RNA sequence: GGGAACGACUCGAGUAGAGUCGAAAAGAAAUAAUGGAGUCCAAUAAGCACCUUGAGAUAUCUAACGUGGAUGAAAAAUCGACGGACUUCACUGUGCAAGAGCAAACACUAUAUCGAAAGGUGUAAAGGCAAAAGAAUACUUCGGUAUUCUUUUGCCAAAAGAAACAACAACAACAAC
Reactivity to 2A3 in 0.01 (KOAc 150mM, MgCl2 10mM, bicine 150mM(pH8.5), 24C), signal-to-noise 3, nucleotides 027 to 126: g070a010a140a000u200a010a050u080g000g030a030g020u050c010c020a010a060u120a120a020g020c000a020c000c000u000u010g020a010g000a100u040a010u050c150u120a090a080c070g010u010g080g040a060u090g160a020a060a050a030a060u170c080g120a080c000g050g010a010c000u060u000c090a040c090u120g010u080g090c060a120a030g010a030g060c010a090a010a000c010a000c070u060a010u000a000u050c020g000a000a040a000g000g010u000g000u020a010a010a000
Reactivity to DMS in 0.01 (KOAc 150mM, MgCl2 10mM, bicine 150mM(pH8.5), 24C), signal-to-noise 2, nucleotides 027 to 126: g080a220a180a090u060a090a120u000g000g000a030g000u000c000c000a090a180u100a070a130g070c000a000c000c020u000u020g000a300g000a000u000a010u000c180u000a030a060c030g000u000g030g000a200u000g000a030a040a070a210a170u000c000g000a130c300g000g000a030c150u030u000c050a100c140u000g000u000g020c160a020a130g000a110g020c090a040a010a130c040a010c050u000a040u020a050u000c000g040a130a030a000g000g050u000g030u000a060a080a040